Chemical mapping of a 177-nucleotide RNA with 2A3. Source: RMDB library RFM100, as collected in RNAgym. Conditions: 150 mM KOAc, 10 mM MgCl2 and 150 mM bicine (pH 8.5), 24 C.
[RMDB]
RNA sequence: GGGAACGACUCGAGUAGAGUCGAAAAUCUGAAGUGGCUACCAGGGCCCCUUGUAGAUCUCUGUGAUGUCAUUCACUAAUGCUUUUACACUGGGUGACUCCUUCUAACAUCACCACAAUCUUCCAGUGACCUAAACGACGUUCGCGUCGUUUAGGUCAAAAGAAACAACAACAACAAC
Reactivity to 2A3 in 0.01 (KOAc 150mM, MgCl2 10mM, bicine 150mM(pH8.5), 24C), signal-to-noise 1, nucleotides 027 to 126: u010c000u050g010a040a030g080u060g010g000c000u010a130c070c100a100g040g060g000c000c000c040c000u040u030g080u080a040g000a050u000c060u000c050u040g070u010g030a020u030g130u100c100a110u150u000c000a000c030u000a100a140u120g040c070u070u140u000u010a010c030a030c040u040g000g000g000u070g040a000c010u070c020c000u040u100c000u030a080a100c000a080u030c010a050c000c010a000c000a000a130u000c010u040u000c000c010a060g000u000